[RMDB]
RNA sequence: GGGAACGACUCGAGUAGAGUCGAAAAUACCUCGCCACUCGUUUGGGCAGGGAUGAAACGACGUCUCCUCAAAUCUGGGUUCGAACUUCCAGCAGUAACAGGAAUUGUCAAGGGACACGCAAGUAAGAACCAGACCGUGUAUGCAGGAUCAACGAGCCGUAAAGCAGACUUUCGAGUCUGCUUUACGAAAAGAAACAACAACAACAAC
Reactivity to DMS in 0.01 (KOAc 150mM, MgCl2 10mM, bicine 150mM(pH8.5), 24C), signal-to-noise 1, nucleotides 027 to 156: u010a140c020c000u010c050g000c000c040a110c040u000c040g020u000u000u010g000g010g040c050a050g000g010g020a070u000g010a080a100a100c180g030a060c030g010u000c020u000c020c000u010c000a070a060a060u010c010u000g030g000g010u010u010c060g040a120a170c030u000u000c000c020a210g060c060a230g040u000a110a170c080a150g020g020a080a110u020u020g010u010c040a140a260g070g050g010a040c030a080c070g040c080a090a040g030u010a070a130g030a070a060c020c000a060g010a110c030c020g010u000g010u000a080u030g020c080a080g010g020a130u000c060a090a070c040g000a130g020c040
Reactivity to 2A3 in 0.01 (KOAc 150mM, MgCl2 10mM, bicine 150mM(pH8.5), 24C), signal-to-noise 2, nucleotides 027 to 156: u070a000c000c000u050c090g000c000c000a050c000u050c050g070u090u250u130g020g000g000c020a030g050g040g000a010u050g070a070a140a010c020g070a000c030g120u000c010u060c040c000u040c050a060a100a140u040c060u090g070g010g110u050u010c040g030a030a070c000u110u000c060c060a030g000c020a050g140u140a100a020c080a100g030g190a150a130u190u110g070u080c050a060a180g120g000g020a040c090a000c090g050c050a090a000g010u090a050a060g000a040a000c010c000a000g010a030c000c030g080u020g000u030a050u060g000c040a030g040g040a090u010c000a010a060c020g000a010g050c000

Chemical mapping of a 207-nucleotide RNA with DMS and 2A3. For 2A3 the reverse transcriptase was SuperScript II with manganese. Reactivities are rounded to 0.1 and cut off at 0 and 3. For 2A3, 1,013 sequencing reads were counted.